[RMDB]
RNA sequence: GGGAACGACUCGAGUAGAGUCGAAAAGAAAAGAAACUAGGAAAGAUCGAAACUAGGAAAGAUCGAAAGACAGGAAGUCGACGAAAGAGUGGAAAGUCGACGAAAAUAAAACACUCGAAACUGUCGAGGGAUACCUAUACUUCGGUAUAGGUAUCCCAAAAGAAACAACAACAACAAC
Reactivity to 2A3 in 0.01 (KOAc 150mM, MgCl2 10mM, bicine 150mM(pH8.5), 24C), signal-to-noise 1, nucleotides 027 to 126: g020a000a070a000a030g080a100a100a010c010u020a040g080g140a130a300a000g000a020u130c070g030a160a000a040c010u020a060g020g040a000a080a000g040a030u030c030g030a030a120a000g000a000c020a000g080g000a000a080g010u010c000g080a000c000g160a170a000a120g120a100g000u030g020g190a000a100a000g000u050c000g020a000c000g000a000a050a000a000u220a100a060a000a000c190a000c050u050c020g000a060a150a100c020u030g010u010c000g010a000
Reactivity to DMS in 0.01 (KOAc 150mM, MgCl2 10mM, bicine 150mM(pH8.5), 24C), signal-to-noise 2, nucleotides 027 to 126: g000a060a140a130a080g040a080a020a090c010u030a030g000g030a020a080a030g030a030u010c030g000a050a010a080c060u000a020g000g000a080a060a120g040a050u030c000g060a120a070a170g020a000c060a010g000g000a120a070g000u010c030g010a030c170g020a130a080a100g020a070g050u060g000g000a060a080a220g030u000c000g000a020c060g000a070a050a020a090u120a000a000a030a150c200a060c140u030c030g000a000a140a110c060u000g000u020c050g000a270

The record gives the reactivity of an RNA of 177 nucleotides to 2A3 and DMS. DMS adducts were read by reverse transcription with MarathonRT. It was measured as part of the RMDB library OK1LIB. The DMS profile rests on 1,650 reads. The 2A3 profile rests on 830 reads. Conditions: 150 mM KOAc, 10 mM MgCl2 and 150 mM bicine (pH 8.5), 24 C.